This 207-nucleotide RNA was probed chemically with 2A3. Values cover nucleotides 27 to 156. It was measured as part of the RMDB library RNAMAK.
RNA sequence: GGGAACGACUCGAGUAGAGUCGAAAAACACGCUUCGGCGUGUGCCACACCUUUGUGCUUAAGAGGUGGGUUAGCUCCCUCGGUCCCAUUGGGACCGUCGGAGCACAACCCACUACCCACCUUAAGCACUCUGGUAGAAUCUCUCGUUCGCGAGAAAAUUGGGUUGUUUUUUCGAAAACAACCCAAUAAAAGAAACAACAACAACAAC
Reactivity to 2A3 in 0.01 (KOAc 150mM, MgCl2 10mM, bicine 150mM(pH8.5), 24C), signal-to-noise 2, nucleotides 027 to 156: a000c010a000c000g000c000u080u110c300g230g010c000g000u030g010u030g040c000c000a140c010a000c000c000u010u050u010g010u000g030c000u000u000a000a000g030a000g000g000u000g000g000g000u000u040a010g000c000u000c000c000c030u000c000g000g000u030c000c060c210a300u300u300g010g020g000a000c000c000g000u000c000g010g010a000g000c030a010c040a000a000c000c000c000a000c000u000a000c020c020c040a080c000c000u000u000a000a000g010c010a000c000u000c010u010g010g000u070a050g060a080a190u030c030u000c000u000c080g020u160u080c180g050c060g080a030g000a090a220a040